This 177-nucleotide RNA was probed chemically with 2A3 and DMS. The 2A3 profile rests on 1,680 reads. Values cover nucleotides 27 to 126. It was measured as part of the RMDB libraries RFM100 and RFMREP.
[RMDB]
RNA sequence: GGGAACGACUCGAGUAGAGUCGAAAAGUGCCAGCAGCCGCGGUAAUACGAACUGCGCGAACGUUAUUCGGAUUCACUGGGCUUAAAGGGUGCGUAGGCGGCCUGUUAAGUAGGGCGUGAAAUCUGUAUUAUAUCCUCCGUUCGCGGAGGAUAUAAUAAAAGAAACAACAACAACAAC
Reactivity to 2A3 in 0.01 (KOAc 150mM, MgCl2 10mM, bicine 150mM(pH8.5), 24C), signal-to-noise 3, nucleotides 027 to 126: g020u050g050c020c020a010g010c040a000g020c010c050g040c030g020g040u090a050a030u050a060c010g030a050a000c010u050g000c000g000c020g100a050a030c040g000u050u160a040u070u110c020g000g050a030u010u020c010a010c080u020g030g030g000c000u030u010a070a050a020g060g000g030u050g040c040g030u100a120g000g110c040g020g050c000c020u080g040u120u020a030a020g020u040a030g080g070g040c060g030u030g070a020a000a090u040c020u020g000u010
Reactivity to DMS in 0.01 (KOAc 150mM, MgCl2 10mM, bicine 150mM(pH8.5), 24C), signal-to-noise 4, nucleotides 027 to 126: g020u020g010c040c020a090g020c070a040g010c030c050g020c030g010g000u020a050a070u020a060c060g010a100a070c090u000g000c010g010c090g000a060a060c070g010u000u020a140u010u010c030g010g000a060u000u000c080a010c010u010g000g000g010c050u000u010a050a080a100g000g030g020u010g000c020g020u030a110g010g020c020g000g010c000c030u030g000u020u010a040a080g030u000a080g000g010g010c170g010u010g000a030a030a070u000c030u000g010u020